Chemical mapping of a 207-nucleotide RNA with 2A3 and DMS. Conditions: 150 mM KOAc, 10 mM MgCl2 and 150 mM bicine (pH 8.5), 24 C. For DMS, 1,873 sequencing reads were counted. For 2A3, 3,265 sequencing reads were counted.
RNA sequence: GGGAACGACUCGAGUAGAGUCGAAAAAAAAAACGCUGGGCAAACGAUGGUAGUGUGUGGAGCUUGUACUGAAGCGCGCACGGUACCAAGCUAUGAAGCACACGAGAGUAGUUUGCCUGUGCUGAAGCGCGCACGGCAACCGAAAGGUGCGAAAAAAGUUUUUAGUAUGGUUCGCCAUACUAAAAACAAAAGAAACAACAACAACAAC
Reactivity to 2A3 in 0.01 (KOAc 150mM, MgCl2 10mM, bicine 150mM(pH8.5), 24C), signal-to-noise 1, nucleotides 027 to 156: a000a050a000a090a000a000c000g010c010u020g000g000g040c000a000a000a000c000g020a020u010g020g000u010a020g000u010g000u000g000u040g000g000a000g000c000u000u000g010u010a000c000u010g030a230a040g010c000g000c010g000c020a010c020g000g000u020a020c080c110a000a010g000c000u090a170u300g000a000a000g000c000a000c010a010c000g000a000g000a000g010u010a000g000u000u000u000g000c000c000u000g000u000g000c000u000g010a050a020g000c000g000c000g000c010a010c010g030g030c000a000a010c000c000g050a070a050a020g000g010u010g010c000g190a140a070a000a020a040a010
Reactivity to DMS in 0.01 (KOAc 150mM, MgCl2 10mM, bicine 150mM(pH8.5), 24C), signal-to-noise 1, nucleotides 027 to 156: a000a070a100a140a100a080c020g000c000u000g040g020g030c000a080a010a030c030g000a200u050g000g040u010a200g010u000g000u000g000u000g010g000a130g040c010u020u000g000u010a010c130u000g050a050a060g030c040g000c000g070c000a300c010g000g000u010a010c140c090a000a020g000c000u000a140u000g000a230a300g010c010a010c000a040c040g010a300g000a170g030u010a170g010u000u000u010g000c030c000u020g010u000g010c000u000g040a090a050g030c040g030c000g000c020a140c000g010g010c030a020a070c030c010g000a160a140a210g020g010u020g000c030g000a000a090a090a130a050a130